Record summary:
The data come from the RNA Mapping Database (RMDB), library OK1LIB. This 177-nucleotide RNA was probed chemically with 2A3. For 2A3 the reverse transcriptase was SuperScript II with manganese. The 2A3 profile rests on 456 reads. Values are in units of 0.01, from 0 to 300, in steps of 10. As a SHAPE reagent, 2A3 marks flexible, mostly unpaired nucleotides at the ribose 2'-OH. Conditions: 150 mM KOAc, 10 mM MgCl2 and 150 mM bicine (pH 8.5), 24 C.
[RMDB]
RNA sequence: GGGAACGACUCGAGUAGAGUCGAAAAGAAUAAAUCCCUCCCUCCAAAACGCGCGCAAAUAAAGGGAGGGCAACAGGGAUGAGUAGGCCUUUUGGCCAUAACCCAAAAGCGCGCGACGGUGCAAGAACCCUGGUCAUGGAUUCGUCCAUGACCAGGGAAAAGAAACAACAACAACAAC
Reactivity to 2A3 in 0.01 (KOAc 150mM, MgCl2 10mM, bicine 150mM(pH8.5), 24C), signal-to-noise 1, nucleotides 027 to 126: g030a000a040u030a000a170a000u010c000c000c000u040c000c000c000u100c000c000a000a180a180a180c010g000c000g000c000g000c020a160a000a000u180a200a000a110g000g000g000a000g010g000g000c000a070a030c030a030g000g000g000a010u050g060a000g150u290a000g000g110c040c040u040u050u300u300g000g000c010c030a060u010a000a000c020c020c000a000a230a000a000g040c000g150c010g000c040g000a000c120g050g120u000g010c000a050a040g050a200a180